Conditions: 150 mM KOAc, 10 mM MgCl2 and 150 mM bicine (pH 8.5), 24 C.
This 177-nucleotide RNA was probed chemically with 2A3 and DMS.
2A3 adducts were read by reverse transcription with SuperScript II with manganese.
For 2A3, 2,805 sequencing reads were counted.
RNA sequence: GGGAACGACUCGAGUAGAGUCGAAAACGCUGGAGAUCGGCCUGUCGCUUGCGGUAUUCGGAAUCUUGCACGCCCUCGCUCAAGCCUUCGUCACUCCAAACGUUUCGGCGAGAAGCAGGCCAUUAUCCCUCAAGCAUUGAUUCGUCAAUGCUUGAGGAAAAGAAACAACAACAACAAC
Reactivity to 2A3 in 0.01 (KOAc 150mM, MgCl2 10mM, bicine 150mM(pH8.5), 24C), signal-to-noise 2, nucleotides 027 to 126: c030g010c070u080g040g050a020g020a120u110c090g050g000c020c030u030g070u070c040g000c000u010u050g020c050g030g020u090a120u050u150c040g020g100a130a090u080c030u070u210g000c030a010c010g000c000c030c000u000c020g020c000u020c050a030a020g030c000c000u030u040c020g050u020c010a050c100u020c020c000a170a000a020c050g020u030u090u080c050g050g000c010g010a040g000a020a010g000c010a020g000g060c020c000a010u020u040a120u050c010
Reactivity to DMS in 0.01 (KOAc 150mM, MgCl2 10mM, bicine 150mM(pH8.5), 24C), signal-to-noise 2, nucleotides 027 to 126: c100g030c110u000g000g020a080g010a100u000c170g020g030c030c020u000g000u010c180g030c020u000u000g020c070g010g000u000a110u010u020c120g040g020a090a050u000c050u000u000g000c060a100c070g000c030c120c030u000c100g000c010u000c080a090a100g010c020c050u000u000c060g020u000c050a090c050u000c060c090a030a070a100c130g000u000u010u010c110g000g010c040g010a080g030a140a120g030c050a020g020g000c010c030a060u000u000a050u000c050
Reactivities are given for positions 27 through 126.